[RMDB]
RNA sequence: GGGAACGACUCGAGUAGAGUCGAAAACAUGCUUAGAUUGCACUCACUUCUGUACCAGUAAGCAAUUCUUACCACAGCACGAAGAACAGUUAGAGCGUACAGAAGAGUUAUUAGCCAUAGCUAAGGAUGCUGUAUGCGCUUUCGAGCGCAUACAGCAAAAAGAAACAACAACAACAAC
Reactivity to 2A3 in 0.01 (KOAc 150mM, MgCl2 10mM, bicine 150mM(pH8.5), 24C), signal-to-noise 2, nucleotides 027 to 126: c080a010u110g030c000u040u030a000g000a050u000u130g010c010a010c050u030c000a170c080u000u000c000u000g000u000a020c020c060a090g030u170a020a000g020c000a050a170u080u000c020u000u030a100c010c000a070c010a100g100c020a030c160g240a050a120g010a070a050c010a090g000u000u080a070g000a000g110c140g000u000a000c000a000g000a010a000g000a000g000u000u130a050u070u160a020g060c060c030a030u070a050g000c020u050a040a010g060g000a020
Reactivity to DMS in 0.01 (KOAc 150mM, MgCl2 10mM, bicine 150mM(pH8.5), 24C), signal-to-noise 1, nucleotides 027 to 126: c020a030u010g000c020u000u010a030g000a060u050u000g000c050a190c110u010c090a030c000u000u000c020u000g000u050a000c000c020a170g000u000a010a210g000c030a090a130u040u000c000u040u000a170c130c060a110c150a100g000c140a070c150g020a120a140g000a150a000c130a220g010u000u000a110g000a180g070c280g000u000a060c000a000g000a060a010g100a020g000u000u000a000u000u050a100g010c000c100a160u000a060g020c000u000a040a000g000g000a160
This 177-nucleotide RNA was probed chemically with 2A3 and DMS. For 2A3 the reverse transcriptase was SuperScript II with manganese. For DMS, 963 sequencing reads were counted. Conditions: 150 mM KOAc, 10 mM MgCl2 and 150 mM bicine (pH 8.5), 24 C.